The record gives the reactivity of an RNA of 177 nucleotides to DMS and 2A3. It was measured as part of the RMDB library OK2TST. The DMS profile rests on 1,270 reads. The reactions ran in a buffer of 150 mM KOAc, 10 mM MgCl2 and 150 mM bicine (pH 8.5), at 24 C. For 2A3 the reverse transcriptase was SuperScript II with manganese.
RNA sequence: GGGAACGACUCGAGUAGAGUCGAAAAACAACAACAACAACAGCCAUCCGUACCGCCGUCUGCCAAAUCACAUGGAUGUGUUGCCGCCGCCUCCGUCAGCGUGCGACCGCUGCUGUACCGCUCCUGGCGGACAGAGAUUCUUCGGAAUCUCUGUCCGAAAAGAAACAACAACAACAAC
Reactivity to DMS in 0.01 (KOAc 150mM, MgCl2 10mM, bicine 150mM(pH8.5), 24C), signal-to-noise 1, nucleotides 027 to 126: a090c030a070a050c070a000a030c050a000a010c050a000a050c070a090g040c090c030a050u010c080c040g000u020a060c060c030g000c080c020g030u000c040u010g000c020c040a060a050a060u000c090a070c160a080u000g000g000a050u000g020u000g020u000u000g010c050c020g000c010c030g010c030c020u020c050c040g010u000c060a050g030c060g000u000g020c010g010a040c070c040g020c000u010g030c030u020g000u000a040c060c030g000c050u010c030c020u010g040g050
Reactivity to 2A3 in 0.01 (KOAc 150mM, MgCl2 10mM, bicine 150mM(pH8.5), 24C), signal-to-noise 1, nucleotides 027 to 126: a000c040a000a010c000a020a000c000a000a000c000a040a000c020a030g020c000c010a030u050c040c030g080u090a110c020c020g000c000c000g080u050c070u050g000c050c000a100a060a030u090c060a050c030a070u100g030g070a020u080g070u030g040u070u070g000c020c020g070c000c030g030c020c010u020c010c000g090u050c020a000g030c000g020u060g000c010g020a020c020c020g060c030u050g000c020u010g030u030a030c000c020g000c040u040c010c010u040g110g000